[RMDB]
RNA sequence: GGGAACGACUCGAGUAGAGUCGAAAACACGUAUGGCACCGGUGGUUAUAUUCCGGCGACCAGCUCUUAUGCAGGCUAUCAGGCUUAUCAGCCGGUCACGGCACCGGCUGGCCGCUCUUAUGUGGACCAGAGUAAAAACGAAUAUCACAUCAGCCUGGAUAUGUGUGGAUUUCGAUCCACACAUAUCAAAAGAAACAACAACAACAAC
Reactivity to 2A3 in 0.01 (KOAc 150mM, MgCl2 10mM, bicine 150mM(pH8.5), 24C), signal-to-noise 6, nucleotides 027 to 156: c050a010c030g080u120a110u130g020g000c040a030c000c030g010g000u070g040g170u300u110a130u040a050u270u080c000c000g000g020c020g070a120c000c010a010g000c020u010c020u150u110a090u220g040c020a020g020g000c000u030a030u200c070a070g020g000c010u080u130a100u170c020a010g000c010c070g000g000u080c130a160c230g110g000c060a010c010c000g000g000c000u010g000g000c000c000g000c010u020c020u080u140a120u170g030u060g030g030a040c030c040a050g020a020g070u140a020a070a070a020a000c060g030a090a040u100a020u190c050a020c000a080u130c050a030g000c000c000u020g050
Reactivity to DMS in 0.01 (KOAc 150mM, MgCl2 10mM, bicine 150mM(pH8.5), 24C), signal-to-noise 3, nucleotides 027 to 156: c070a110c090g020u000a080u000g020g040c040a040c020c000g000g030u010g050g030u000u010a130u000a300u020u000c000c000g010g030c030g020a260c010c000a040g010c020u000c050u000u010a060u000g010c020a050g000g020c020u000a110u000c080a150g020g020c020u020u000a090u000c050a050g030c000c010g000g000u000c050a110c130g040g030c070a060c010c000g000g000c020u000g000g010c030c030g000c020u010c080u000u000a050u010g050u000g010g020a070c050c030a090g000a140g010u010a030a030a070a090a110c070g010a070a090u010a100u010c070a050c050a040u000c060a050g020c030c010u000g010